The record gives the reactivity of an RNA of 177 nucleotides to DMS and 2A3. The RNA was probed in 150 mM KOAc, 10 mM MgCl2 and 150 mM bicine (pH 8.5) at 24 C. The 2A3 profile rests on 1,565 reads. Source: RMDB library OK1LIB, as collected in RNAgym.

[RMDB]
RNA sequence: GGGAACGACUCGAGUAGAGUCGAAAAUUCCACUGGCUUUUAGAUUUAUAUUCUGGUGGAAGCACUGCUGAAUAUAUGGAAGAUAAGGAAAACGAAAAGGAAGACAAAAUAAAAGGAUCGAAAGGCACGACCUAUAUGACUUCGGUCAUAUAGGUCGAAAAGAAACAACAACAACAAC
Reactivity to DMS in 0.01 (KOAc 150mM, MgCl2 10mM, bicine 150mM(pH8.5), 24C), signal-to-noise 2, nucleotides 027 to 126: u010u010c000c010a090c080u000g000g000c150u010u020u000u010a110g060a140u040u040u050a040u020a080u000u000c050u010g000g010u000g010g010a070a050g000c100a080c090u000g000c030u000g010a020a000u010a050u000a120u020g020g010a020a030g000a010u020a050a130g020g000a040a020a010a030c080g000a030a030a020a040g040g000a070a040g000a070c090a040a060a080a070u000a030a120a090a080g000g000a080u010c010g000a030a000a070g000g000c180a120
Reactivity to 2A3 in 0.01 (KOAc 150mM, MgCl2 10mM, bicine 150mM(pH8.5), 24C), signal-to-noise 2, nucleotides 027 to 126: u050u000c020c000a020c020u090g060g070c000u000u000u040u270a030g040a110u000u150u150a170u060a060u190u000c000u060g040g000u030g000g030a020a010g010c080a020c090u110g020c000u030g010a010a030u100a020u010a000u090g040g000a050a000g000a060u020a140a030g120g000a060a000a060a010c070g040a010a030a000a010g090g000a000a000g000a000c060a000a060a040a000u200a070a180a020a020g080g010a050u050c030g040a100a000a000g060g000c040a010